An RNA of 207 nucleotides, treated with 2A3 and read out base by base. The RNA was probed in 150 mM KOAc, 10 mM MgCl2 and 150 mM bicine (pH 8.5) at 24 C.

RNA sequence: GGGAACGACUCGAGUAGAGUCGAAAAUCCUAAGUCCGAACUUUGAUCGAGUCGCGCAUUUCACAUUGGGAGAACCUCGGAAACGAGGUUCGUUGAUCAAUGUGAUUCAACGACUCGGGAGUUCGGAUAUGGAAAAACCUCCUGUUCGCAGGAGGAAGUGGAUUUAGUUCUUCGGAACUAAAUCCACAAAAGAAACAACAACAACAAC
Reactivity to 2A3 in 0.01 (KOAc 150mM, MgCl2 10mM, bicine 150mM(pH8.5), 24C), signal-to-noise 1, nucleotides 027 to 156: u010c000c000u000a030a000g030u030c000c000g010a000a030c040u300u250u040g020a060u080c000g000a000g000u010c000g000c010g020c130a120u020u020u010c000a000c000a000u000u000g000g020g000a020g000a010a000c000c000u000c000g000g000a030a040a010c010g000a000g020g020u000u000c000g040u070u020g000a000u010c000a000a000u000g000u000g000a000u080u050c030a070a000c000g000a000c010u000c010g000g000g000a000g000u020u000c010g000g000a000u000a000u000g010g050a020a050a010a030a030c000c000u020c000c000u010g050u080u090c300g060c070a010g000g030a000g020g010a020a000